[RMDB]
RNA sequence: GGGAACGACUCGAGUAGAGUCGAAAAGACGAGGUUGACCUUGAUGCCGUCGUAAGCCAGCGAGGCGACCGCAAGGCCCACCGAGCGCUGUUGCCGGAUCUCCGCCUCGUCGAAGUCGCAGACCGUGUAGCUAAAAAUGGUUCGCCAUUUUUAGCUAAAAAGAAACAACAACAACAAC
Reactivity to 2A3 in 0.01 (KOAc 150mM, MgCl2 10mM, bicine 150mM(pH8.5), 24C), signal-to-noise 4, nucleotides 027 to 126: g030a000c010g020a000g020g010u060u100g080a110c040c000u080u070g050a080u120g150c040c050g080u060c010g030u050a060a020g080c060c060a020g030c030g040a040g060g000c000g010a040c020c000g010c040a020a060g010g000c000c060c000a030c020c030g100a160g040c040g000c110u150g100u280u190g030c030c010g010g010a030u030c020u020c010c010g000c000c000u000c000g000u000c000g010a020a000g040u060c030g000c120a000g040a070c020c030g030u070g050
Reactivity to DMS in 0.01 (KOAc 150mM, MgCl2 10mM, bicine 150mM(pH8.5), 24C), signal-to-noise 7, nucleotides 027 to 126: g010a040c010g020a040g010g010u000u000g020a080c110c060u000u000g010a050u000g000c050c050g010u010c030g010u010a090a130g020c090c070a060g010c030g010a160g000g000c170g010a040c010c040g000c110a080a080g000g010c020c020c100a110c070c030g000a150g020c040g010c100u000g010u010u010g010c040c010g000g000a080u000c060u010c100c080g000c010c000u000c010g010u000c010g000a060a070g000u000c040g020c070a050g010a220c020c020g000u000g010
Source information: An RNA of 177 nucleotides, treated with 2A3 and DMS and read out base by base. The DMS profile rests on 9,957 reads. The RNA was probed in 150 mM KOAc, 10 mM MgCl2 and 150 mM bicine (pH 8.5) at 24 C. DMS adducts were read by reverse transcription with MarathonRT.